[RMDB]
This 177-nucleotide RNA was probed chemically with DMS.
RNA sequence: GGGAACGACUCGAGUAGAGUCGAAAAGCAGAGCUUACCCGUCUUACGCGCAACGAUCACUUUUUGGAGGUAGGCGCGAGCGUUACCUUACAACACUUUCUGGAGCAAGCGGGUGAGUAUUUGCCUCAAAGGACUCGUAUUUCGAUACGAGUCCUUUAAAAGAAACAACAACAACAAC
Reactivity to DMS in 0.01 (KOAc 150mM, MgCl2 10mM, bicine 150mM(pH8.5), 24C), signal-to-noise 3, nucleotides 027 to 126: g020c000a000g030a050g010c000u000u000a000c000c010c010g020u000c030u000u000a120c210g100c050g020c110a180a100c240g010a050u010c130a060c140u000u000u020u000u010g000g010a010g000g000u010a020g000g010c000g000c300g000a130g010c000g020u010u000a010c020c010u000u000a060c010a040a030c300a030c140u000u000u000c020u010g020g010a300g000c050a050a010g010c030g000g010g020u010g010a020g010u000a030u010u000u000g000c000c030u000c100
The DMS profile rests on 1,768 reads. The RNA was probed in 150 mM KOAc, 10 mM MgCl2 and 150 mM bicine (pH 8.5) at 24 C.